[RMDB]
RNA sequence: GGGAACGACUCGAGUAGAGUCGAAAAGAAUGGAAAUGUGCGUCCAAGCAGUGAGUGUGAGAAGUAGGCAAAUCCGCUUCUCGCGAAGCAUGAGCUGUGAUGGGGAAGGAAAUUAAGUACGGAAGUUCCUGAUUUCACGCUGUCAAGAAAAGCCUCUGUUAACAUAUCUCUUCGGAGAUAUGUUAACAAAAGAAACAACAACAACAAC
Reactivity to DMS in 0.01 (KOAc 150mM, MgCl2 10mM, bicine 150mM(pH8.5), 24C), signal-to-noise 2, nucleotides 027 to 156: g000a080a080u000g070g020a030a050a080u000g020u000g000c030g020u000c020c040a060a210g000c050a080g020u000g000a200g040u000g040u000g000a030g000a030a020g030u000a020g070g050c050a100a080a170u010c010c000g010c010u010u010c010u000c020g050c060g020a070a160g000c040a070u000g010a300g040c010u010g030u020g000a140u000g000g020g000g000a030a040g010g000a010a010a070u000u000a030a060g000u000a100c060g030g030a100a150g000u000u010c000c010u000g020a110u000u000u000c000a050c050g010c010u000g000u010c020a110a180g000a080a040a130a180g000c020c010u000c020u000
Reactivity to 2A3 in 0.01 (KOAc 150mM, MgCl2 10mM, bicine 150mM(pH8.5), 24C), signal-to-noise 5, nucleotides 027 to 156: g030a030a070u100g010g070a050a060a050u160g040u040g040c010g030u020c030c020a040a020g000c020a020g020u040g050a030g000u090g000u100g040a010g020a010a000g020u250a300g060g000c160a110a100a060u100c010c000g000c020u000u000c000u000c010g020c010g000a050a000g010c030a020u050g020a000g010c020u010g010u040g040a100u210g020g020g000g000a000a050g060g030a040a040a030u140u090a140a040g020u030a040c060g010g070a040a020g010u030u040c010c000u020g040a120u030u050u090c030a020c020g000c020u020g070u120c070a060a050g060a080a100a030a020g040c000c030u030c030u020
Structure probing data (DMS and 2A3) for a 207-nucleotide construct. DMS adducts were read by reverse transcription with MarathonRT. Reactivities are rounded to 0.1 and cut off at 0 and 3. High 2A3 reactivity points to a flexible backbone, as in loops and unpaired stretches. The 2A3 profile rests on 4,429 reads. It was measured as part of the RMDB library PDB130.